[RMDB]
RNA sequence: GGGAACGACUCGAGUAGAGUCGAAAAGAUAUGGAUUACAGACAUGCUACUAUGUCGGAAACGACAUUUUAGCAACAGCUGUUGUCCUAAGUCGCUAGUCUCUCAGGUGUUCGCACCUGAGAGACAACGAAAGAUAUACGUUCGCGUAUAUCUUUCGAAAAGAAACAACAACAACAAC
Reactivity to 2A3 in 0.01 (KOAc 150mM, MgCl2 10mM, bicine 150mM(pH8.5), 24C), signal-to-noise 7, nucleotides 027 to 126: g020a020u050a030u110g000g000a010u010u030a010c010a020g130a070c060a150u140g000c000u000a000c000u010a000u010g010u000c000g010g010a050a060a010c000g000a000c000a000u010u010u000u010a020g020c030a040a010c030a040g040c000u000g000u020u020g010u000c010c000u020a120a040g040u030c010g030c180u100a060g000u000c000u000c000u000c000a000g000g020u020g060u080u140c300g030c130a000c000c000u010g000a000g000a000g000a000c010a000a010
Reactivity to DMS in 0.01 (KOAc 150mM, MgCl2 10mM, bicine 150mM(pH8.5), 24C), signal-to-noise 9, nucleotides 027 to 126: g000a040u000a300u010g000g010a010u000u000a010c000a010g010a060c080a210u000g000c000u000a010c010u000a000u000g020u000c000g020g000a070a060a160c010g010a020c000a000u000u000u000u000a000g010c010a040a070c300a150g010c000u000g010u000u000g000u000c000c000u000a040a130g010u000c020g010c190u010a120g010u000c000u000c000u000c000a000g000g010u000g000u000u010c240g030c010a010c000c000u000g000a000g010a000g000a000c000a010a070